[RMDB]
RNA sequence: GGGAACGACUCGAGUAGAGUCGAAAAGUUAAUAGUAAUGUUCGCGAUUUGUGUACUUCAGUAUGAGAUCGAGAAUAUCGCGACGAAAGUAAAGCCACGUAACAAAGAGUAUAUAUCGCGAGGGUGAAAGGUGUUAAAUGUUCGCAUUUAACACCUUAAAAGAAACAACAACAACAAC
Reactivity to 2A3 in 0.01 (KOAc 150mM, MgCl2 10mM, bicine 150mM(pH8.5), 24C), signal-to-noise 3, nucleotides 027 to 126: g060u030u070a070a070u130a240g100u050a090a050u150g080u100u030c000g000c020g000a020u010u040u110g130u040g000u030a010c010u080u180c060a080g020u070a030u070g070a020g020a080u040c020g010a020g020a130a060u070a030u050c030g010c040g000a030c020g050a100a050a000g030u090a090a030a010g000c000c030a020c070g020u060a060a030c030a110a090a010g050a010g070u040a040u000a010u000a000u140c000g000c000g020a060g000g020g020u040g050a050
Reactivity to DMS in 0.01 (KOAc 150mM, MgCl2 10mM, bicine 150mM(pH8.5), 24C), signal-to-noise 6, nucleotides 027 to 126: g000u010u010a050a080u000a140g010u000a100a070u010g010u000u000c020g000c000g020a010u000u010u010g020u000g020u000a000c010u010u000c250a290g010u000a020u000g010a080g010a030u010c020g010a040g000a050a060u000a040u000c040g010c020g010a060c160g000a070a050a130g020u010a060a080a150g010c030c040a050c080g020u010a080a070c090a060a050a100g000a080g010u000a040u010a100u010a230u000c030g020c040g020a050g000g010g020u010g000a070

Notes
Structure probing data (2A3 and DMS) for a 177-nucleotide construct. Source: RMDB library OK2TST, as collected in RNAgym. DMS adducts were read by reverse transcription with MarathonRT. Reactivities are rounded to 0.1 and cut off at 0 and 3.